[RMDB]
The record gives the reactivity of an RNA of 170 nucleotides to 2A3 and DMS. The DMS profile rests on 2,964 reads. For DMS the reverse transcriptase was MarathonRT. Conditions: 150 mM KOAc, 10 mM MgCl2 and 150 mM bicine (pH 8.5), 24 C. Values cover nucleotides 27 to 129. 2A3 adducts were read by reverse transcription with SuperScript II with manganese. For 2A3, 847 sequencing reads were counted.
RNA sequence: GGGAACGACUCGAGUAGAGUCGAAAAUAAUUCUGCUAAGUUUUGGGAAGAGGCAUUCUAUAGAGAUCUCUAUAGUUCGCCUACCACUUUGCAGGCUGUCGGUUCAUGCGUUGUAUGCCAUUCACAGAGACCAGCGUCUUCGGACGCUGGAAAAGAAACAACAACAACAAC
Reactivity to 2A3 in 0.01 (KOAc 150mM, MgCl2 10mM, bicine 150mM(pH8.5), 24C), signal-to-noise 1, nucleotides 027 to 129: u240a000a050u130u040c000u000g000c000u000a000a000g010u050u030u020u040g000g000g040a170a190g070a120g020g000c000a000u000u000c000u000a000u000a020g120a020g030a080u260c000u000c000u210a020u000a110g000u000u090c000g000c000c000u030a030c000c000a000c000u000u000u000g030c010a000g000g000c000u000g050u140c000g000g080u050u080c000a000u070g000c000g100u210u190g140u180a080u180g030c030c000a020u090u000c040a060c000a060g080a000g000a000
Reactivity to DMS in 0.01 (KOAc 150mM, MgCl2 10mM, bicine 150mM(pH8.5), 24C), signal-to-noise 1, nucleotides 027 to 129: u040a150a060u120u040c050u000g000c030u110a020a020g060u000u030u120u030g000g000g020a260a210g070a000g020g000c000a080u000u030c030u060a040u050a000g040a030g020a210u040c220u030c000u030a000u000a080g030u060u000c030g010c000c000u000a060c000c050a020c050u000u000u000g010c090a010g000g000c190u000g060u020c080g000g040u000u000c070a070u010g000c040g120u110u000g000u050a050u000g020c000c090a060u000u000c000a140c010a120g030a170g010a170